[RMDB]
RNA sequence: GGGAACGACUCGAGUAGAGUCGAAAAUGCCUCAGCCUCCAGAGUAGGUGGGAUUACAGGCGUCCGCCACCACGCUUGGCUAAUUUUUUGUAUUUUUAGUAGAGGCAGGGUUUCACCAUGUUGGCCAGGCUGGUCUUGAACUCCUGAUCUCAGGUGAACGGCAUAUAUAGUUCGCUAUAUAUGCCGUAAAAGAAACAACAACAACAAC
Reactivity to 2A3 in 0.01 (KOAc 150mM, MgCl2 10mM, bicine 150mM(pH8.5), 24C), signal-to-noise 2, nucleotides 027 to 156: u080g020c010c000u040c040a020g020c020c000u050c030c050a020g020a040g170u110a090g070g030u050g020g030g010a060u080u110a060c050a120g020g030c020g020u020c030c050g030c060c010a000c000c010a010c100g010c010u010u020g010g000c000u010a050a130u030u070u050u080u130u120g150u110a200u080u190u010u030u120a050g030u020a030g020a020g020g010c020a010g020g000g020u020u070u050c050a090c020c000a020u070g000u050u060g020g000c000c000a010g030g000c000u020g020g000u040c030u080u150g020a040a030c020u000c000c000u030g080a150u080c060u050c120a030g000g050u010g060a050
Reactivity to DMS in 0.01 (KOAc 150mM, MgCl2 10mM, bicine 150mM(pH8.5), 24C), signal-to-noise 2, nucleotides 027 to 156: u000g020c030c000u000c010a160g020c020c000u010c040c020a200g020a120g000u010a060g020g030u010g010g010g010a110u000u010a120c050a030g030g000c060g030u020c040c030g030c030c010a030c010c020a040c040g020c020u000u010g010g010c010u000a010a000u010u000u000u000u000u000g020u020a060u030u010u010u000u000a090g020u010a090g010a040g050g030c040a110g010g010g010u000u000u010c030a040c020c040a110u010g010u000u000g010g040c010c010a030g010g010c040u020g010g010u000c040u000u000g010a050a060c060u000c000c010u000g020a090u010c070u010c030a070g020g010u000g010a120
Annotation: The data come from the RNA Mapping Database (RMDB), library OK3TST. Structure probing data (2A3 and DMS) for a 207-nucleotide construct.